[RMDB]
RNA sequence: GGGAACGACUCGAGUAGAGUCGAAAAGCCGAGAAGUUCGCUUCUCGGCGAAGGGCUGUUUUUCUCGGUGACUUUCAGCCCCAAACAAAAAAUGUCAGCAAAAUCCGGAACGGUUCGCCGUUCCGAACCUAAAUUUGAGAUUCGUCUCAAAUUUAGGAAAAGAAACAACAACAACAAC
Reactivity to 2A3 in 0.01 (KOAc 150mM, MgCl2 10mM, bicine 150mM(pH8.5), 24C), signal-to-noise 6, nucleotides 027 to 126: g000c000c000g000a000g000a000a000g020u080u280c220g020c110u000u000c000u000c000g010g000c000g000a000a000g000g000g000c000u000g020u000u010u000u030u010c130u050c100g130g070u010g000a010c000u000u010u000c000a000g000c000c000c010c070a020a010a010c010a010a010a000a000a000a030u120g010u020c000a010g060c020a080a060a030a070u100c110c010g000g000a000a000c000g000g070u040u050c230g020c050c000g000u000u000c000c000g000a000a000
Reactivity to DMS in 0.01 (KOAc 150mM, MgCl2 10mM, bicine 150mM(pH8.5), 24C), signal-to-noise 4, nucleotides 027 to 126: g010c000c000g010a010g010a020a010g010u000u000c220g010c000u000u000c000u000c000g010g010c000g000a040a080g000g010g020c000u000g000u000u000u010u000u000c080u000c160g010g000u000g010a020c010u000u010u000c010a010g010c000c010c000c150a010a000a200c030a000a000a010a000a010a020u020g030u010c010a010g000c050a130a080a110a100u010c130c000g010g010a020a010c000g000g000u000u010c220g020c000c000g010u000u000c000c000g000a020a050
Chemical mapping of a 177-nucleotide RNA with 2A3 and DMS. The 2A3 profile rests on 17,360 reads. For DMS the reverse transcriptase was MarathonRT. Source: RMDB library M2PK50, as collected in RNAgym.